RNA sequence: GGGAACGACUCGAGUAGAGUCGAAAAGGUGCUUCGGCACCGCUGAAUCCUAAGUCACUGGGAGUGGUAAGCGAUCAACAGCGAUAUCGGAAACGAUAUCGACAUGAUCGCAAACCACGAAGAACAGUGAUAUGGAAUGAUGGAGAUUCGUCUCCAAACCAGUAAAAAAAUUCGUUUUUUUACUGGUAAAAGAAACAACAACAACAAC
Reactivity to DMS in 0.01 (KOAc 150mM, MgCl2 10mM, bicine 150mM(pH8.5), 24C), signal-to-noise 3, nucleotides 027 to 156: g000g000u000g020c000u000u010c300g100g020c000a030c000c010g080c090u000g020a160a150u000c000c000u000a090a300g000u000c000a020c010u000g000g000g020a260g040u000g010g000u000a050a300g010c020g010a010u000c010a060a060c150a210g010c010g020a060u000a000u000c000g000g010a180a160a250c000g000a020u020a010u000c000g000a040c040a300u010g000a010u000c010g020c010a010a080a070c000c030a000c020g000a050a160g000a180a280c010a010g020u000g020a000u000a170u000g000g000a080a090u000g010a220u010g010g000a060g010a140u000u020c200g000u000c000u000c000c010a020a200
Reactivity to 2A3 in 0.01 (KOAc 150mM, MgCl2 10mM, bicine 150mM(pH8.5), 24C), signal-to-noise 5, nucleotides 027 to 156: g010g000u010g000c010u060u140c190g150g010c000a000c000c000g000c000u030g160a070a100u040c000c000u030a120a050g010u000c000a010c000u010g010g000g010a060g010u000g000g010u020a050a010g010c000g000a000u010c010a040a100c030a110g060c010g010a000u000a000u000c010g010g050a080a040a040c020g000a000u010a000u010c000g030a030c000a030u060g000a000u000c000g000c000a000a000a010c010c000a000c000g000a000a000g020a030a010c000a000g000u000g010a000u010a030u060g010g030a090a090u160g090a120u140g070g000a010g000a000u050u140c180g130u020c060u010c000c000a010a010